[RMDB]
Structure probing data (2A3 and DMS) for a 177-nucleotide construct. For DMS, 1,183 sequencing reads were counted. Reactivities are given for positions 27 through 126. For 2A3, 2,131 sequencing reads were counted. Conditions: 150 mM KOAc, 10 mM MgCl2 and 150 mM bicine (pH 8.5), 24 C. It was measured as part of the RMDB library OK1LIB.
RNA sequence: GGGAACGACUCGAGUAGAGUCGAAAACAAAACAACAAACAAACGAUGAAAAGUUCGCGAAACCGUCAAAGAAAAGACGGAGACCAAUCCACGUAAGGUCCGCGAGCAAACGUCGAAUACGUGGAUAGCUCAGUGUAUGGUUCGCCAUACACUGAGCAAAAGAAACAACAACAACAAC
Reactivity to 2A3 in 0.01 (KOAc 150mM, MgCl2 10mM, bicine 150mM(pH8.5), 24C), signal-to-noise 3, nucleotides 027 to 126: c070a050a050a000a010c120a040a010c020a040a200a060c100a130a090a020c030g020a020u030g110a100a100a090a070g000u000u000c000g000c010g100a180a050a090c030c000g000u010c060a130a050a150g200a020a180a140a000g000a020c000g000g000a000g000a000c000c000a010a020u070c020c030a030c010g000u010a000a170g000g000u010c060c010g010c000g010a000g000c010a050a020a000c060g020u010c010g040a060a020u090a060c000g000u000g000g030a040u100a000
Reactivity to DMS in 0.01 (KOAc 150mM, MgCl2 10mM, bicine 150mM(pH8.5), 24C), signal-to-noise 2, nucleotides 027 to 126: c050a020a000a090a110c280a130a000c300a060a170a200c190a160a080a050c130g000a070u000g030a080a000a260a110g000u000u000c000g000c040g000a110a200a030c000c000g000u050c000a040a040a190g070a040a060a120a120g020a000c000g020g000a300g050a060c000c040a000a060u000c070c000a000c010g000u000a010a250g000g070u000c000c000g050c000g010a000g110c000a000a000a030c130g080u000c000g030a090a030u000a000c000g000u000g000g000a260u120a170